[RMDB]
RNA sequence: GGGAACGACUCGAGUAGAGUCGAAAAUGACAUUCGUGUCAAAUUUCACCUUUGUGGCAAUGGAGCAACUCCAUGUGCUUCUACCCAUUGGGUAGAAGAACUACACAUUAAGUUGCGUUGAAAUUGCCACUCUGGUAGCAGGCGACUUCGGUCGCAAAAUAGAAUGCGAAUUCGUUCGCAUUCUAUUAAAAGAAACAACAACAACAAC
Reactivity to DMS in 0.01 (KOAc 150mM, MgCl2 10mM, bicine 150mM(pH8.5), 24C), signal-to-noise 4, nucleotides 027 to 156: u010g010a030c010a090u010u010c190g040u000g020u010c010a060a120a170u000u010u000c050a080c000c000u000u000u010g030u000g010g020c010a020a020u000g010g000a300g020c010a030a030c010u000c020c070a040u000g010u010g000c000u010u010c010u010a020c000c000c010a300u000u010g060g030g060u000a010g020a020a040g000a040a130c030u010a290c010a010c020a030u000u010a010a020g000u000u010g020c010g040u000u040g020a050a110a050u000u000g010c000c010a010c000u000c020u000g000g030u000a110g040c130a120g010g010c000g010a030c030u000u010c220g060g020u000c010g010c010a000a010
Reactivity to 2A3 in 0.01 (KOAc 150mM, MgCl2 10mM, bicine 150mM(pH8.5), 24C), signal-to-noise 7, nucleotides 027 to 156: u060g000a020c020a020u050u120c300g070u110g010u040c020a040a080a090u160u170u170c050a020c010c000u010u000u010g000u000g000g000c000a010a010u000g020g000a040g010c000a000a000c010u000c030c020a000u000g000u010g010c000u000u000c000u000a000c000c010c100a300u140u300g000g000g000u000a000g000a000a000g000a010a000c050u260a050c020a000c000a000u020u020a020a000g010u000u000g000c010g050u060u030g010a030a010a000u000u000g000c000c000a000c000u000c000u000g010g000u020a050g070c140a090g120g130c020g000a010c000u090u140c300g100g000u000c000g000c000a030a020
Notes
Chemical mapping of a 207-nucleotide RNA with DMS and 2A3. For DMS, 10,631 sequencing reads were counted. For 2A3, 11,330 sequencing reads were counted. Conditions: 150 mM KOAc, 10 mM MgCl2 and 150 mM bicine (pH 8.5), 24 C. 2A3 adducts were read by reverse transcription with SuperScript II with manganese.